Annotation: The data come from the RNA Mapping Database (RMDB), library TTRDEL. Structure probing data (DMS and 2A3) for a 177-nucleotide construct. For DMS, 1,922 sequencing reads were counted. For DMS the reverse transcriptase was MarathonRT. The RNA was probed in 150 mM KOAc, 10 mM MgCl2 and 150 mM bicine (pH 8.5) at 24 C.
[RMDB]
RNA sequence: GGGAACGACUCGAGUAGAGUCGAAAAGAUAUGGAGUUGGCGAGCUUGGAUUUACAAAGUGGUCGGAAACGACCACUAAGUUGUCAGCUCGAGACUCCUAAGUCAAAGCGGCAGUUCGCUGCCGCAAGAUUACGAAUUCGUUCGCGAAUUCGUAAUCAAAAGAAACAACAACAACAAC
Reactivity to DMS in 0.01 (KOAc 150mM, MgCl2 10mM, bicine 150mM(pH8.5), 24C), signal-to-noise 3, nucleotides 027 to 126: g010a030u000a300u000g000g010a000g010u000u010g000g040c010g020a020g030c000u000u010g020g000a030u000u010u000a000c000a030a300a050g020u000g010g020u000c010g030g000a100a110a230c020g000a000c000c010a010c000u000a030a300g000u000u000g000u000c000a040g000c000u000c000g010a300g010a020c000u000c000c000u000a010a090g000u000c040a030a110a180g030c010g000g000c030a010g030u000u000c300g000c020u000g000c000c000g030c010a000a010
Reactivity to 2A3 in 0.01 (KOAc 150mM, MgCl2 10mM, bicine 150mM(pH8.5), 24C), signal-to-noise 3, nucleotides 027 to 126: g010a000u060a040u180g000g010a020g030u040u070g300g300c010g000a010g000c030u160u260g150g070a130u300u300u070a030c010a000a130a010g000u000g000g020u000c000g000g020a060a060a050c000g000a010c000c000a000c000u000a010a010g000u010u010g040u010c030a000g010c010u000c000g000a010g000a000c000u000c000c000u000a080a010g050u000c020a070a100a060g000c000g000g000c000a010g000u070u160c220g070c190u000g000c000c000g010c010a020a000